[RMDB]
RNA sequence: GGGAACGACUCGAGUAGAGUCGAAAAUGGCUGGACACAGUGGCUCCAUGCCUGAUAUCCCAGCUGGAGGAUGACUUGAACCCAUGAGUUCGAGAGCAGCAUGGGCAAUAUAGUGAGACCCUAUCUCGUUUCAGAAGUCGUUCGCGACUUCUGAAACAAAAGAAACAACAACAACAAC
Reactivity to DMS in 0.01 (KOAc 150mM, MgCl2 10mM, bicine 150mM(pH8.5), 24C), signal-to-noise 1, nucleotides 027 to 126: u000g020g020c000u000g010g010a180c100a120c270a120g040u020g010g020c190u000c020c000a020u000g000c000c010u030g000a140u000a190u010c010c000c020a070g010c050u000g000g000a180g000g000a080u010g000a090c020u000u010g050a040a050c010c080c130a130u000g070a200g010u000u000c010g000a040g050a190g000c140a050g010c060a020u000g000g020g020c030a000a050u020a050u000a040g010u020g000a180g000a110c030c020c030u000a070u000c060u000c100
Reactivity to 2A3 in 0.01 (KOAc 150mM, MgCl2 10mM, bicine 150mM(pH8.5), 24C), signal-to-noise 1, nucleotides 027 to 126: u090g000g000c000u000g080g030a000c030a000c000a200g170u190g260g000c040u030c030c010a030u230g000c010c010u020g000a010u040a090u220c010c010c010a000g060c020u090g010g060a110g070g010a090u000g050a020c010u040u040g060a030a050c060c000c000a270u100g000a050g100u140u070c030g020a010g000a020g210c040a040g040c010a090u040g000g040g010c050a030a060u110a040u050a110g140u050g090a030g040a050c000c010c000u030a110u090c120u030c060